Notes: This 207-nucleotide RNA was probed chemically with 2A3. The 2A3 profile rests on 1,650 reads. The RNA was probed in 150 mM KOAc, 10 mM MgCl2 and 150 mM bicine (pH 8.5) at 24 C.
RNA sequence: GGGAACGACUCGAGUAGAGUCGAAAAGGGGUCCAGAGCGUCCUUGGAUUUACGUAGCUUUUGACGAGCUGAAGCCUCCACGGCUCGAUAAGCUACGUUGUCAGGACCUCUGGACGGAGGCACCCAAAACAGACCUGCGGUUCGCCGCAGGUCUGAAUCACUGAUAUUCGUUCGCGAAUAUCAGUGAAAAAGAAACAACAACAACAAC
Reactivity to 2A3 in 0.01 (KOAc 150mM, MgCl2 10mM, bicine 150mM(pH8.5), 24C), signal-to-noise 2, nucleotides 027 to 156: g030g000g000g000u000c010c010a000g000a020g020c240g000u040c010c010u120u260g160g000a070u300u300u120a010c010g000u000a000g000c000u100u080u160u210g230a170c040g000a000g000c000u000g010a120a020g040c000c020u030c000c010a040c010g000g000c000u000c020g030a070u060a210a010g020c000u000a000c000g000u020u020g030u080c050a030g000g000a000c000c000u000c000u000g000g000a010c000g000g000a010g000g000c010a080c010c000c000a030a120a000a010c010a000g020a000c000c000u000g000c000g000g100u030u130c300g090c010c010g000c010a000g000g000u000c000u000g000a000a000